[RMDB]
RNA sequence: GGGAACGACUCGAGUAGAGUCGAAAACACACCUGGUUCGCCAGGUGUGAAAUAAAAGCUCACCAACCAAUAUAAACAAGAGCAUGGAUGGAAAAUAAAUAAAAACUGUAAUGUUCGCAUUACAGAACAUUCGUUAUGAGUUCGCUCAUAACGAAUGAAAAGAAACAACAACAACAAC
Reactivity to 2A3 in 0.01 (KOAc 150mM, MgCl2 10mM, bicine 150mM(pH8.5), 24C), signal-to-noise 2, nucleotides 027 to 126: c000a000c000a000c010c000u010g010g050u040u020c100g030c100c000a000g010g000u000g000u000g020a000a000a000u060a010a040a000a030g040c020u020c040a090c010c010a040a000c000c020a070a030u080a010u080a210a240a080c110a110a050g050a030g040c070a040u060g040g050a030u020g040g090a060a080a050a070u160a040a140a020u170a080a100a050a000a030c000u010g000u000a000a000u000g020u040u070c240g000c090a000u000u000a000c020a000g000a030a000
Reactivity to DMS in 0.01 (KOAc 150mM, MgCl2 10mM, bicine 150mM(pH8.5), 24C), signal-to-noise 1, nucleotides 027 to 126: c000a010c000a010c020c010u010g000g020u000u010c300g010c010c010a010g000g050u000g040u000g000a010a140a070u010a030a040a060a170g000c030u010c010a100c030c010a030a070c080c030a050a050u010a110u000a100a110a060c160a120a040g000a050g020c040a020u000g020g000a100u000g000g000a070a050a100a050u010a060a030a080u000a030a050a070a140a050c020u000g020u000a000a000u000g020u000u000c220g000c000a000u000u000a020c000a000g000a030a130
Annotation: Source: RMDB library M2PK50, as collected in RNAgym. The record gives the reactivity of an RNA of 177 nucleotides to 2A3 and DMS. Reactivities are rounded to 0.1 and cut off at 0 and 3. For 2A3, 1,468 sequencing reads were counted.